RNA sequence: GGGAACGACUCGAGUAGAGUCGAAAAUGAAGCAAAUCCAUAAUUGCCAAUGAUUAGCAAUUCGCUAUUGCCGCCUAAAAACGGUUAGCCGGGGCUGCUAGAGCCUUGUUACCAAAGAUAGCCGGCGUUACGGCAUGAUGGUUCGCCAUCAUGCCAAGUACGUUCUACUAUUCGUAGUAGAACGUACAAAAGAAACAACAACAACAAC
Reactivity to DMS in 0.01 (KOAc 150mM, MgCl2 10mM, bicine 150mM(pH8.5), 24C), signal-to-noise 3, nucleotides 027 to 156: u010g000a140a130g020c050a090a090a170u000c020c060a110u000a060a050u010u000g000c010c030a090a170u010g000a250u010u000a040g010c000a040a020u000u010c020g010c000u010a110u010u000g020c000c010g000c030c030u000a060a080a110a120a070c030g010g050u000u010a020g020c030c050g000g000g010g040c030u000g020c070u000a100g000a080g010c000c020u000u000g010u010u010a160c130c040a060a100a110g010a160u000a030g010c040c070g030g030c050g020u010u000a070c130g020g000c000a010u000g000a040u000g020g010u000u010c300g030c040c000a010u000c000a020u000g010c010c010a010a060
Reactivity to 2A3 in 0.01 (KOAc 150mM, MgCl2 10mM, bicine 150mM(pH8.5), 24C), signal-to-noise 7, nucleotides 027 to 156: u110g020a060a010g030c050a030a030a080u090c040c020a060u090a120a060u090u040g020c030c030a100a110u160g050a140u190u040a030g000c000a020a070u100u080c060g000c040u060a060u060u160g000c000c000g000c010c000u060a080a050a010a020a010c030g020g000u060u040a020g010c020c040g030g000g000g000c030u040g030c080u130a060g030a010g190c000c000u010u040g040u060u070a050c030c030a100a010a000g070a050u050a020g040c030c010g030g010c010g050u080u100a060c090g000g000c000a000u010g000a000u000g000g050u050u090c190g010c070c000a000u000c000a000u000g000c000c000a000a000
An RNA of 207 nucleotides, treated with DMS and 2A3 and read out base by base.
Conditions: 150 mM KOAc, 10 mM MgCl2 and 150 mM bicine (pH 8.5), 24 C.
For DMS, 6,559 sequencing reads were counted.